[RMDB]
About this RNA
Chemical mapping of a 207-nucleotide RNA with 2A3 and DMS. The DMS profile rests on 2,181 reads. For 2A3 the reverse transcriptase was SuperScript II with manganese. The RNA was probed in 150 mM KOAc, 10 mM MgCl2 and 150 mM bicine (pH 8.5) at 24 C.
RNA sequence: GGGAACGACUCGAGUAGAGUCGAAAAAAUGGAAAUGAUACCGAUGCCCAUGACCUUGUUGAUGGUGUUAUUCAUUUCUAACACAAAAUAAGGUUUGUCGUAAGAUAAACUAUUAGAAAUUUUUGUUUUGGUCAUAUAGACGCAACCGCUGGAUGUAAUCCUUGACAUAGUUCGCUAUGUCAAGGAUAAAAGAAACAACAACAACAAC
Reactivity to 2A3 in 0.01 (KOAc 150mM, MgCl2 10mM, bicine 150mM(pH8.5), 24C), signal-to-noise 2, nucleotides 027 to 156: a000a010u180g000g050a090a050a060u070g020a090u100a120c040c040g060a090u100g020c010c030c030a040u020g090a070c010c010u090u010g000u050u040g180a140u050g030g060u000g030u050u020a060u010u040c070a120u000u000u100c010u070a070a030c020a000c030a050a090a030a030u100a120a030g010g000u020u020u040g010u000c040g030u050a030a090g000a070u020a010a010a000c030u080a120u220u140a080g090a080a160a100u140u090u030u020u090g030u020u110u090u070g020g000u000c020a010u050a010u050a190g010a030c030g030c050a010a010c030c010g070c110u070g080g020a000u060g080u200a090
Reactivity to DMS in 0.01 (KOAc 150mM, MgCl2 10mM, bicine 150mM(pH8.5), 24C), signal-to-noise 1, nucleotides 027 to 156: a040a030u000g020g000a110a060a100u000g000a170u000a140c020c030g040a130u000g000c040c000c050a100u020g000a110c020c040u020u000g000u000u000g000a100u000g010g000u000g020u000u000a130u020u000c070a160u000u000u000c010u000a050a010c050a180c050a080a090a040a130u000a080a180g020g040u000u000u000g000u010c030g010u020a090a150g030a040u000a020a010a010c000u000a070u000u000a100g000a080a100a120u000u000u000u000u000g010u000u000u000u000g010g030u000c020a090u000a210u000a130g000a050c080g010c050a080a060c030c050g000c050u000g040g010a050u000g010u000a090